[RMDB]
RNA sequence: GGGAACGACUCGAGUAGAGUCGAAAAAUGCUGGUAUAGGGUGUACUUCGGAUUUCCGAGCCUAUAUUGGUUUUGAAAGGACCUUUAAGUCCCUACUAUACUACAUUGUACUAGCGUAGGCCACGUACAUCGUUCGCGGGUUCGCCCGCGAACGAUGAAAAGAAACAACAACAACAAC
Reactivity to 2A3 in 0.01 (KOAc 150mM, MgCl2 10mM, bicine 150mM(pH8.5), 24C), signal-to-noise 1, nucleotides 027 to 126: a000u090g000c030u000g000g010u000a000u010a000g000g000g000u060g080u070a050c010u000u000c110g240g000a190u000u070u090c000c000g010a000g050c000c000u030a030u020a120u140u110g020g070u040u070u070u050g060a050a050a000g020g000a040c000c000u000u190u050a040a000g000u020c040c000c030u010a100c000u030a020u000a040c070u030a000c020a070u070u110g140u100a020c000u000a020g120c090g140u020a020g010g000c020c000a080c010g050u050a020
This 177-nucleotide RNA was probed chemically with 2A3.
It was measured as part of the RMDB library RFM100.
Reactivities are given for positions 27 through 126.
For 2A3, 432 sequencing reads were counted.